Structure probing data (2A3 and DMS) for a 177-nucleotide construct. It was measured as part of the RMDB library RFMREP. 2A3 is a SHAPE reagent: it acylates the 2'-hydroxyl of flexible nucleotides of all four kinds. For DMS the reverse transcriptase was MarathonRT. The reactions ran in a buffer of 150 mM KOAc, 10 mM MgCl2 and 150 mM bicine (pH 8.5), at 24 C.
[RMDB]
RNA sequence: GGGAACGACUCGAGUAGAGUCGAAAACCAUGUAUUGAGCACAUCGGGCGAAAGUCCCCGGGCGACGGGGCAGAGAGUGCCAGCCCGCAAGGGCAGGACCCCCGCGCGUCGUUUUUACGACCGCGGGCCCCAUCUAAUAGUUCGCUAUUAGAUGGGGAAAAGAAACAACAACAACAAC
Reactivity to 2A3 in 0.01 (KOAc 150mM, MgCl2 10mM, bicine 150mM(pH8.5), 24C), signal-to-noise 1, nucleotides 027 to 126: c000c010a010u020g050u040a230u040u230g050a080g020c000a020c010a120u050c050g030g100g000c100g060a140a000a030g110u090c010c010c000c000g080g080g050c140g100a140c020g000g000g010g020c010a010g060a030g000a030g110u090g060c030c000a020g010c030c000c000g000c010a020a070g000g020g000c020a020g010g020a000c000c000c000c000c000g000c020g030c110g030u000c000g000u000u060u090u270u280a010c010g000a000c020c020g010c020g040g010g000
Reactivity to DMS in 0.01 (KOAc 150mM, MgCl2 10mM, bicine 150mM(pH8.5), 24C), signal-to-noise 2, nucleotides 027 to 126: c020c010a110u000g020u000a100u010u010g000a130g000c040a050c040a080u000c060g000g020g040c050g000a080a070a120g010u000c040c000c010c050g010g000g030c190g010a180c040g020g010g000g010c070a090g010a080g010a070g030u000g000c020c030a070g010c010c000c000g010c300a090a070g010g000g000c000a020g000g000a120c060c080c000c000c000g040c010g000c160g000u010c020g020u000u020u010u000u020a010c000g000a020c000c000g010c000g010g000g000